The record gives the reactivity of an RNA of 177 nucleotides to 2A3 and DMS. For 2A3, 3,373 sequencing reads were counted. The RNA was probed in 150 mM KOAc, 10 mM MgCl2 and 150 mM bicine (pH 8.5) at 24 C. For DMS, 1,587 sequencing reads were counted.

RNA sequence: GGGAACGACUCGAGUAGAGUCGAAAACAGGCCGUUUCCGCGAACAGCUCGCGGCCGAUCAGCAUCCGGCGGAUCUCGCUCGUGCCGGCGCCGAUCUCGUAGAGCUUCGCGUCACGCCAGAGACGGACCCCACUGGAUUAUUCGUAAUCCAGUGGGGAAAAGAAACAACAACAACAAC
Reactivity to 2A3 in 0.01 (KOAc 150mM, MgCl2 10mM, bicine 150mM(pH8.5), 24C), signal-to-noise 2, nucleotides 027 to 126: c040a020g030g060c020c010g020u020u000u020c030c000g000c000g000a040a070c090a160g020c000u020c010g010c000g020g020c090c030g010a010u010c010a010g010c020a090u120c000c000g020g000c020g050g030a110u080c160u070c240g120c050u040c020g230u150g000c020c000g010g030c010g000c020c000g010a010u000c080u040c010g050u080a150g000a000g000c000u020u010c010g000c000g050u100c030a030c150g060c060c000a000g000a000g000a020c010g030g030a050
Reactivity to DMS in 0.01 (KOAc 150mM, MgCl2 10mM, bicine 150mM(pH8.5), 24C), signal-to-noise 3, nucleotides 027 to 126: c090a140g010g010c000c000g020u000u000u000c020c030g000c000g020a020a090c280a080g010c020u000c020g010c040g000g000c180c180g010a010u000c010a040g000c040a100u010c010c010g000g010c010g040g010a060u010c230u000c090g010c170u000c020g010u010g010c030c010g010g020c300g010c010c020g010a040u000c010u020c010g010u010a130g010a020g000c020u000u000c050g010c000g000u000c190a070c210g040c120c090a120g030a030g000a030c000g000g010a300